Structure probing data (DMS and 2A3) for a 207-nucleotide construct. Values cover nucleotides 27 to 156. Conditions: 150 mM KOAc, 10 mM MgCl2 and 150 mM bicine (pH 8.5), 24 C. High 2A3 reactivity points to a flexible backbone, as in loops and unpaired stretches.
RNA sequence: GGGAACGACUCGAGUAGAGUCGAAAAUAGGGCCAUUUGGGAUUUAGGUCAUAUUUCUUCCAUUCCAGAAUUGCAGUGAUGCAGACCUGUCACUCAUGCUUCUACCAAAGAUACUUUUUCUCCUUUUUCUCUGAUCCUAAUCGGAAUUGCAAAGCCCCGUUAAUAGAAAAUUCGUUUUCUAUUAACGAAAAGAAACAACAACAACAAC
Reactivity to DMS in 0.01 (KOAc 150mM, MgCl2 10mM, bicine 150mM(pH8.5), 24C), signal-to-noise 1, nucleotides 027 to 156: u000a070g030g030g030c020c010a180u000u000u000g010g000g030a120u010u010u000a050g030g020u000c030a090u000a070u000u000u000c030u010u020c000c020a200u000u020c020c020a160g010a060a140u000u010g040c140a100g030u010g020a120u000g020c020a100g000a060c060c030u020g000u000c020a030c020u020c060a070u000g030c030u000u010c010u000a130c050c050a060a080a110g010a100u000a070c050u000u000u000u000u000c040u010c000c020u010u000u000u000u000c020u020c070u010g020a090u000c050c020u000a080a090u000c090g000g000a090a110u000u000g010c030a110a150a160g000c000c030c160
Reactivity to 2A3 in 0.01 (KOAc 150mM, MgCl2 10mM, bicine 150mM(pH8.5), 24C), signal-to-noise 4, nucleotides 027 to 156: u070a010g000g020g020c020c010a040u080u060u120g080g000g030a040u060u110u160a050g020g000u020c030a020u090a050u110u070u030c050u090u020c040c010a050u090u050c020c020a050g060a140a110u100u080g020c020a000g020u040g060a050u040g020c010a020g030a080c000c030u030g020u060c010a010c030u030c020a040u070g020c020u060u020c010u050a070c010c040a070a060a030g040a100u080a110c050u090u100u030u090u010c030u110c020c020u060u070u040u150u040c040u010c020u060g060a080u070c000c020u060a060a040u060c040g020g040a080a080u140u110g010c040a050a120a130g140c010c160c160